[RMDB]
RNA sequence: GGGAACGACUCGAGUAGAGUCGAAAAAAGAUAUGGAACUCACGGAGGGAGAACGAGGGCACUCUCACAUCGGAAACGAUGUGAGUUGCCAGCUCGUUCAUCGAUCUCCUGUGAGUUCCUAAGUCAACACAAUUGGAAGGUUCGCCUUCCAAUUGUGAAAAGAAACAACAACAACAAC
Reactivity to DMS in 0.01 (KOAc 150mM, MgCl2 10mM, bicine 150mM(pH8.5), 24C), signal-to-noise 2, nucleotides 027 to 126: a090a100g010a030u010a300u010g000g000a010a020c000u000c000a010c010g010g000a040g000g020g000a030g010a010a000c000g010a040g010g000g010c000a020c230u000c000u000c000a000c000a010u000c010g000g010a140a060a150c010g040a030u000g000u000g010a010g000u000u000g000c000c010a100g000c010u000c010g000u010u000c000a180u000c170g010a080u000c000u000c000c010u000g060u000g010a000g010u000u000c000c010u000a010a040g000u000c010a110a240